RNA sequence: GGGAACGACUCGAGUAGAGUCGAAAACACACUACCCUAACGUCAACGCCAAGAGUCUCGCACUCAUGUCAGGUAGUGACAGUAAGACGCUCUAUGCUCACUUCAUCUCCGCAGUCGAGGCAGUCUUACAAUCAACGACAGCCGCCGACCAGCAGGCAUCCGUAGGUGAUUUCGAUCACCUACGGAUAAAAGAAACAACAACAACAAC
Reactivity to 2A3 in 0.01 (KOAc 150mM, MgCl2 10mM, bicine 150mM(pH8.5), 24C), signal-to-noise 4, nucleotides 027 to 156: c110a000c000a020c010u070a040c000c010c030u090a150a070c090g080u100c120a090a050c090g040c090c020a120a060g000a010g030u020c040u100c160g080c050a020c000u020c010a040u090g100u070c070a030g000g020u040a040g010u020g040a020c010a010g010u030a010a010g010a010c020g000c030u040c010u020a040u080g030c020u040c080a140c080u240u170c080a220u050c060u060c070c060g030c020a040g010u100c040g040a030g010g090c030a040g000u010c000u040u030a030c030a050a080u170c060a040a060c040g100a060c070a020g010c030c020g060c010c040g110a080c040c010a010g040c050a060g050g000c010
Reactivity to DMS in 0.01 (KOAc 150mM, MgCl2 10mM, bicine 150mM(pH8.5), 24C), signal-to-noise 1, nucleotides 027 to 156: c050a180c030a100c050u000a000c000c000c080u000a170a050c020g040u010c030a070a100c100g030c100c040a100a190g010a030g050u000c020u000c080g040c060a110c030u000c020a120u030g030u000c100a080g010g000u010a050g010u010g020a020c080a150g020u010a030a040g030a090c010g060c020u000c030u000a060u010g000c050u000c070a140c060u000u000c030a180u000c040u000c020c050g000c010a140g000u000c160g010a090g080g030c020a180g040u000c010u000u000a070c060a100a060u030c160a080a060c070g020a080c030a210g020c000c010g030c100c030g020a060c070c010a140g020c010a030g020g050c040

Background
This 207-nucleotide RNA was probed chemically with 2A3 and DMS. The data come from the RNA Mapping Database (RMDB), library OK3TST. As a SHAPE reagent, 2A3 marks flexible, mostly unpaired nucleotides at the ribose 2'-OH.